[RMDB]
RNA sequence: GGGAACGACUCGAGUAGAGUCGAAAACGCAUGCGAAAGCAUGCGGCUAUGCUAAUGCAUGGCGACCGCGAUCAAGUAGAGGAGGCGGCGAUAGUGGUUAUUAUUCCGCUAUCGAUUACCAGUGUCUGUUAUUAUUCAGAUACAUGGAGCUCUACGAGCUAUAGCGUACGUUCGCGUACGCUAUAGCAAAAGAAACAACAACAACAAC
Reactivity to DMS in 0.01 (KOAc 150mM, MgCl2 10mM, bicine 150mM(pH8.5), 24C), signal-to-noise 3, nucleotides 027 to 156: c020g030c000a020u000g000c000g010a240a170a270g020c020a000u000g020c000g040g020c030u000a020u010g010c020u010a110a210u000g020c000a010u000g000g000c000g010a170c030c020g020c050g000a190u000c090a110a150g010u000a020g000a050g000g010a130g050g000c020g000g000c060g000a010u000a010g040u000g010g020u010u010a170u020u010a300u000u010c000c020g020c000u000a000u000c000g000a100u000u000a030c000c010a280g010u000g050u000c000u000g000u000u010a240u030u010a210u000u000c010a030g000a010u000a020c010a250u000g010g010a190g000c010u010c000u000a020c010g020a250
Reactivity to 2A3 in 0.01 (KOAc 150mM, MgCl2 10mM, bicine 150mM(pH8.5), 24C), signal-to-noise 5, nucleotides 027 to 156: c010g000c000a010u000g010c010g050a100a010a010g000c010a000u000g000c000g010g010c000u000a000u000g000c010u170a300a050u300g000c000a000u000g000g010c020g050a070c000c010g000c000g010a140u090c130a170a060g000u010a010g010a000g040g060a060g010g070c010g000g000c000g000a000u000a000g010u020g050g060u100u050a120u260u050a130u260u100c000c000g000c010u000a000u000c000g010a000u020u080a030c000c000a010g000u010g010u000c000u000g090u050u040a220u190u060a130u130u140c000a000g000a000u000a010c040a140u020g000g020a020g030c010u000c000u000a000c010g000a000